[RMDB]
Chemical mapping of a 207-nucleotide RNA with 2A3.

RNA sequence: GGGAACGACUCGAGUAGAGUCGAAAACAUCCGAAACGUACGCGUACGGAAACCAUCCACAUAGCAUGCGAAAGGAUGGCGUUCCAUUACUACCGGCUGUUACACUUCCAUCCGAAACGUACGGCUAACCGUCACUCUCACGUACGGAAACCAUCCGCUAAAGGGCAGUGUUCGCACUGCCCUUUAGAAAAGAAACAACAACAACAAC
Reactivity to 2A3 in 0.01 (KOAc 150mM, MgCl2 10mM, bicine 150mM(pH8.5), 24C), signal-to-noise 1, nucleotides 027 to 156: c000a040u020c000c050g000a010a190a110c070g020u050a000c100g040c090g050u000a000c050g030g000a090a040a000c040c040a060u020c050c010a000c000a040u110a040g180c080a080u110g000c000g200a060a040a040g070g000a000u000g010g000c000g040u030u000c000c030a020u090u060a000c040u050a010c020c020g000g010c050u030g060u270u090a030c110a120c100u150u070c010c010a070u000c000c040g060a070a100a080c010g000u050a030c070g080g020c000u000a030a060c000c040g000u000c020a020c100u030c000u080c070a000c100g010u080a040c030g020g000a000a000a020c060c020a060u170c020c000g040